[RMDB]
RNA sequence: GGGAACGACUCGAGUAGAGUCGAAAAGCAUCCCGCUUCGGCGGGAUGCAAAAGCGAUCGUGUCAUUGCCUCGAACGCAACUCAUAUAUUGAUGGGCAGUGAAAAGUCUGGGCUUCGGCCCAGACAAGUAUAAGAUACUCUUCGGAGUAUCUUAUACAAAAGAAACAACAACAACAAC
Reactivity to DMS in 0.01 (KOAc 150mM, MgCl2 10mM, bicine 150mM(pH8.5), 24C), signal-to-noise 4, nucleotides 027 to 126: g000c000a010u000c000c000c000g020c010u000u010c190g010g050c000g030g000g020a000u000g020c000a010a010a090a140g010c020g010a060u000c010g020u010g000u000c010a030u000u000g020c000c010u010c040g010a050a070c020g020c020a090a100c060u000c030a090u010a110u010a110u010u000g000a080u000g010g010g030c010a020g020u000g010a090a140a080a110g010u000c000u000g000g000g010c000u000u010c230g030g010c000c000c000a000g000a000c010a000a060
Reactivity to 2A3 in 0.01 (KOAc 150mM, MgCl2 10mM, bicine 150mM(pH8.5), 24C), signal-to-noise 5, nucleotides 027 to 126: g000c000a000u010c020c020c000g030c020u060u070c150g130g000c030g010g020g010a000u010g010c000a010a010a000a010g010c010g010a040u040c030g020u040g110u140c020a020u010u040g000c010c000u010c030g030a040a010c010g010c020a020a090c020u030c070a020u200a060u080a080u280u280g140a120u120g050g000g000c010a010g000u000g010a050a040a020a050g000u000c000u000g000g000g000c010u050u070c240g110g010c010c000c000a010g000a000c000a000a000
Description
The data come from the RNA Mapping Database (RMDB), library M2PK50. Structure probing data (DMS and 2A3) for a 177-nucleotide construct. Conditions: 150 mM KOAc, 10 mM MgCl2 and 150 mM bicine (pH 8.5), 24 C. For 2A3, 10,289 sequencing reads were counted. For 2A3 the reverse transcriptase was SuperScript II with manganese.